[RMDB]
RNA sequence: GGGAACGACUCGAGUAGAGUCGAAAACGCAGCAAAUCAAUAGACCGUUAAAUUAUGUUGCUCAGGCUGUAAGUGCACCUGUAACUAGUCGUAUAAGUGCAGGAACAGAACAGGCUAGUAUGUAAAAAUAUUACGGAUGAUUCGUCAUCCGUAAUAUAAAAGAAACAACAACAACAAC
Reactivity to 2A3 in 0.01 (KOAc 150mM, MgCl2 10mM, bicine 150mM(pH8.5), 24C), signal-to-noise 5, nucleotides 027 to 126: c040g020c010a020g020c010a040a040a080u110c020a050a100u080a130g130a100c040c030g090u120u160a070a100a040u130u110a100u090g050u050u040g010c000u020c080a030g080g000c010u020g020u080a140a030g040u050g060c050a060c040c000u030g020u010a080a050c020u010a040g130u130c080g030u200a090u020a280a030g020u010g010c010a010g030g010a000a000c020a020g090a060a010c010a010g030g060c010u030a020g050u080a090u180g110u100a020a130a030a070
Reactivity to DMS in 0.01 (KOAc 150mM, MgCl2 10mM, bicine 150mM(pH8.5), 24C), signal-to-noise 9, nucleotides 027 to 126: c120g020c060a040g010c040a050a080a080u010c100a080a100u000a090g010a140c090c070g010u000u010a070a080a090u010u010a050u010g000u000u000g010c030u000c090a090g000g000c010u000g000u000a060a180g000u000g010c100a060c010c030u000g010u000a050a040c020u000a060g000u010c180g010u000a070u010a030a060g010u000g000c010a020g000g010a230a060c050a040g010a090a060c090a080g000g010c010u000a050g010u000a050u010g010u010a010a050a080a090
Overview:
This 177-nucleotide RNA was probed chemically with 2A3 and DMS. The DMS profile rests on 14,580 reads. The 2A3 profile rests on 5,449 reads. 2A3 adducts were read by reverse transcription with SuperScript II with manganese. The data come from the RNA Mapping Database (RMDB), library OK2TRN. The RNA was probed in 150 mM KOAc, 10 mM MgCl2 and 150 mM bicine (pH 8.5) at 24 C.